This 177-nucleotide RNA was probed chemically with DMS and 2A3. Conditions: 150 mM KOAc, 10 mM MgCl2 and 150 mM bicine (pH 8.5), 24 C. Reactivities are given for positions 27 through 126. The DMS profile rests on 5,335 reads. Source: RMDB library OK1LIB, as collected in RNAgym.

RNA sequence: GGGAACGACUCGAGUAGAGUCGAAAAUAAACACCUCGAAUGAGGUGGAGAGUCGUGCAAAUAAGAGGCUCGACAGAUGCACGACAAAGCGAGCCUACAAAGGUCGAGGAAAACUCGACCCCAAAAACGUGAUCGUGGUGUUCGCACCAUGAUCACGAAAAGAAACAACAACAACAAC
Reactivity to DMS in 0.01 (KOAc 150mM, MgCl2 10mM, bicine 150mM(pH8.5), 24C), signal-to-noise 3, nucleotides 027 to 126: u020a060a130a140c000a000c000c000u010c010g000a180a080u030g020a000g000g020u000g000g000a100g010a120g000u010c000g000u000g010c000a040a080a130u040a120a100g000a050g010g000c000u000c000g010a170c180a160g020a150u010g000c050a010c030g000a070c010a040a060a050g000c050g000a010g020c000c000u010a100c090a050a180a090g000g000u000c000g010a040g040g000a070a030a120a160c030u000c000g000a000c000c020c060c050a020a070a040a050a100
Reactivity to 2A3 in 0.01 (KOAc 150mM, MgCl2 10mM, bicine 150mM(pH8.5), 24C), signal-to-noise 4, nucleotides 027 to 126: u180a010a050a000c000a000c010c000u000c010g220a260a290u300g000a000g000g000u010g000g000a040g010a000g000u010c000g000u000g000c030a020a030a030u160a200a120g040a070g070g010c000u010c000g040a050c020a040g110a050u060g000c000a000c010g010a020c010a010a010a010g090c020g000a000g000c000c000u040a080c080a020a080a010g010g000u000c000g010a010g000g060a050a100a100a130c000u000c000g000a000c000c000c010c000a050a110a020a020a010